[RMDB]
RNA sequence: GGGAACGACUCGAGUAGAGUCGAAAACUAUAAUAAUAAAAGGUGAAAUGUCAGCAGUCACAUAUUAUUCUGUCUAACAAUAGUUUAUAAUUUUUACUCUGUGGGAGCACUUGCCCUUUUAUAGUCUCAACUCUUGCGUUUUGACUGACUGCCCAAGCCUUUAUGCAUGUUUCGACAUGCAUAAAGGAAAAGAAACAACAACAACAAC
Reactivity to 2A3 in 0.01 (KOAc 150mM, MgCl2 10mM, bicine 150mM(pH8.5), 24C), signal-to-noise 1, nucleotides 027 to 156: c000u010a000u120a300a140u180a120a040u110a030a190a060a000g090g000u130g160a120a230a150u090g030u030c060a020g000c020a010g020u100c030a020c030a160u140a030u300u000a070u120u040c030u050g080u100c000u050a070a050c030a070a120u030a050g000u040u020u130a210u050a040a120u020u080u000u070u130a050c020u060c070u010g020u030g050g080g000a030g030c030a000c000u040u130g090c020c030c000u050u050u020u070a050u090a020g030u010c000u020c010a000a140c000u040c010u100u070g070c000g060u040u010u000u080g100a060c090u050g020a030c100u070g000c100c000c000a030a130g040

This 207-nucleotide RNA was probed chemically with 2A3. The reactions ran in a buffer of 150 mM KOAc, 10 mM MgCl2 and 150 mM bicine (pH 8.5), at 24 C. Source: RMDB library OK3TST, as collected in RNAgym.